Overview: Conditions: 150 mM KOAc, 10 mM MgCl2 and 150 mM bicine (pH 8.5), 24 C. Structure probing data (DMS and 2A3) for a 177-nucleotide construct. For DMS, 2,013 sequencing reads were counted. For 2A3, 1,275 sequencing reads were counted. The data come from the RNA Mapping Database (RMDB), library OK2TST.

[RMDB]
RNA sequence: GGGAACGACUCGAGUAGAGUCGAAAAAAAGGUAACCAUCACUAUCUGGUGAUAAAUUAGGAGCAGCGACAGGCAGAUGCUUUUGCGUAAUCUCCCCUGGACUCUCAUUUGUAUCAGGAGCAAACGAUAAUCGUACCGUAUUCGUACGGUACGAUUAAAAAGAAACAACAACAACAAC
Reactivity to DMS in 0.01 (KOAc 150mM, MgCl2 10mM, bicine 150mM(pH8.5), 24C), signal-to-noise 3, nucleotides 027 to 126: a050a030a020g010g020u000a060a100c080c030a070u000c030a050c030u000a080u010c130u020g020g000u000g010a080u010a040a040a090u000u010a070g000g000a040g010c130a070g010c050g010a080c110a030g020g000c210a090g020a040u000g000c030u000u000u000u000g000c020g020u000a060a090u000c030u000c060c040c000c030u010g000g020a120c040u000c070u000c120a050u010u020u000g010u000a070u010c050a050g010g000a130g000c110a050a050a070c130g000a130
Reactivity to 2A3 in 0.01 (KOAc 150mM, MgCl2 10mM, bicine 150mM(pH8.5), 24C), signal-to-noise 2, nucleotides 027 to 126: a020a000a010g090g000u030a010a050c020c000a050u030c030a000c020u100a140u300c070u120g010g030u040g040a030u060a090a080a010u120u130a090g000g060a050g030c020a010g000c030g090a070c090a030g030g000c010a010g030a100u110g080c000u070u050u100u170g000c020g010u010a040a100u000c010u000c000c080c010c000u000g020g030a030c000u000c000u020c090a100u130u140u060g070u020a130u070c010a030g040g000a040g040c060a070a120a040c060g070a030